[RMDB]
This 177-nucleotide RNA was probed chemically with 2A3 and DMS. The 2A3 profile rests on 13,703 reads. DMS adducts were read by reverse transcription with MarathonRT.
RNA sequence: GGGAACGACUCGAGUAGAGUCGAAAAGCGUCUGCGUGGCAAGCUGUAUUUGUUGUUGCAACGCAACGCCCUGCGCGCGCCGGAUCAGUUCGAGAUCCCGCCUAACCGCGUGAUUGAGUUAGGUACGCGGGUAAUUAGGAUUCGUCCUAAUUACCCGAAAAGAAACAACAACAACAAC
Reactivity to 2A3 in 0.01 (KOAc 150mM, MgCl2 10mM, bicine 150mM(pH8.5), 24C), signal-to-noise 9, nucleotides 027 to 126: g020c010g010u070c130u040g000c010g010u020g020g000c020a030a040g040c060u080g160u300a300u190u250u150g160u090u080g120u060u020g010c020a020a010c010g000c010a010a000c010g020c000c000c000u050g000c020g000c010g000c010g030c050c070g020g000a020u030c010a040g090u170u110c040g010a020g000a150u010c000c010c010g020c000c000u010a020a010c020c000g030c050g090u070g100a170u090u210g040a110g020u010u020a010g020g010u030a060c100g010
Reactivity to DMS in 0.01 (KOAc 150mM, MgCl2 10mM, bicine 150mM(pH8.5), 24C), signal-to-noise 5, nucleotides 027 to 126: g010c000g010u000c090u000g010c000g010u010g000g020c020a070a080g000c060u010g010u030a080u050u030u020g010u010u010g000u010u010g000c020a050a040c020g000c010a040a020c020g000c020c020c010u010g020c030g010c040g010c120g000c080c120g000g000a030u000c040a100g010u020u020c210g000a180g000a050u000c000c000c070g010c010c000u010a010a020c040c040g020c070g000u000g000a100u020u040g000a140g000u000u010a020g020g000u010a120c190g010